[RMDB]
RNA sequence: GGGAACGACUCGAGUAGAGUCGAAAAUAACAUUGCCAUUACUAUUAACAGUUUUGUGAGCAGUAACAGUUAAUGGACUAUUUAAACCAUCAAAGGUAAUGGAAACUUGGAGAAUGGUAUCAGUAACCCCUACUCCAUGUUUCGACAUGGAGUAGGGAAAAGAAACAACAACAACAAC
Reactivity to DMS in 0.01 (KOAc 150mM, MgCl2 10mM, bicine 150mM(pH8.5), 24C), signal-to-noise 2, nucleotides 027 to 126: u010a060a140c060a040u010u030g000c000c010a100u020u000a130c020u000a000u000u010a020a040c030a050g030u000u000u010u000g050u000g000a090g000c050a060g000u000a020a030c060a070g000u000u000a000a020u000g010g020a230c200u010a060u000u000u000a060a100a100c020c000a030u010c120a060a060a100g010g000u000a080a040u000g000g020a100a050a140c130u000u000g050g010a060g000a050a040u010g000g000u000a060u000c100a060g010u010a110a060c220
Reactivity to 2A3 in 0.01 (KOAc 150mM, MgCl2 10mM, bicine 150mM(pH8.5), 24C), signal-to-noise 2, nucleotides 027 to 126: u070a020a000c060a090u000u080g000c000c000a010u060u010a050c010u010a010u150u060a050a030c020a050g050u100u070u170u110g130u170g060a070g140c030a030g060u090a020a000c000a000g000u020u000a000a030u040g000g000a020c020u070a110u040u110u030a140a090a030c020c030a030u110c020a060a140a100g080g000u060a080a000u040g050g000a070a120a000c120u110u130g070g030a060g040a090a100u060g010g010u060a060u120c030a030g010u060a020a030c000